Chemical mapping of a 170-nucleotide RNA with DMS and 2A3. For DMS, 27,714 sequencing reads were counted. For 2A3 the reverse transcriptase was SuperScript II with manganese.
RNA sequence: GGGAACGACUCGAGUAGAGUCGAAAACCUCGAUCCACCUUCGAGGGGGUUCACACCUCCAACCUGCGGGCCGGCUACUCUUCUUUUCCUUUCCUCGUCAUCCUGGGUCAACCUCUUAAGUUCCUCUAGAGAAGGCAGUUCGCUGCCUUCAAAAGAAACAACAACAACAAC
Reactivity to DMS in 0.01 (KOAc 150mM, MgCl2 10mM, bicine 150mM(pH8.5), 24C), signal-to-noise 6, nucleotides 027 to 129: c000c000u020c070g030a070u000c030c040a080c090c070u030u040c050g030a150g060g000g040g030g030u060u050c210a110c040a160c040c020u030c000c050a100a110c100c060u040g030c070g030g060g000c050c060g000g000c050u000a090c050u010c040u000u000c000u030u020u020u020c000c050u020u030u010c010c000u000c050g060u030c000a100u020c030c020u030g050g000g000u040c060a090a130c000c000u040c020u070u050a110a160g000u000u000c050c020u000c060u000a020g020a300
Reactivity to 2A3 in 0.01 (KOAc 150mM, MgCl2 10mM, bicine 150mM(pH8.5), 24C), signal-to-noise 6, nucleotides 027 to 129: c010c000u010c030g020a030u040c020c040a030c030c020u060u030c030g020a110g000g030g000g010g000u120u130c120a070c020a010c060c010u020c020c010a070a080c010c010u090g000c010g010g030g010c000c000g010g010c000u030a050c020u010c000u090u030c000u030u040u050u060c000c000u030u060u020c010c010u040c000g050u000c030a050u020c020c030u030g010g000g010u010c030a040a070c020c000u050c000u060u050a080a020g020u040u020c020c010u010c030u010a030g010a000
As a SHAPE reagent, 2A3 marks flexible, mostly unpaired nucleotides at the ribose 2'-OH. The RNA was probed in 150 mM KOAc, 10 mM MgCl2 and 150 mM bicine (pH 8.5) at 24 C. The 2A3 profile rests on 17,907 reads. For DMS the reverse transcriptase was MarathonRT. The data come from the RNA Mapping Database (RMDB), library 15KLIB.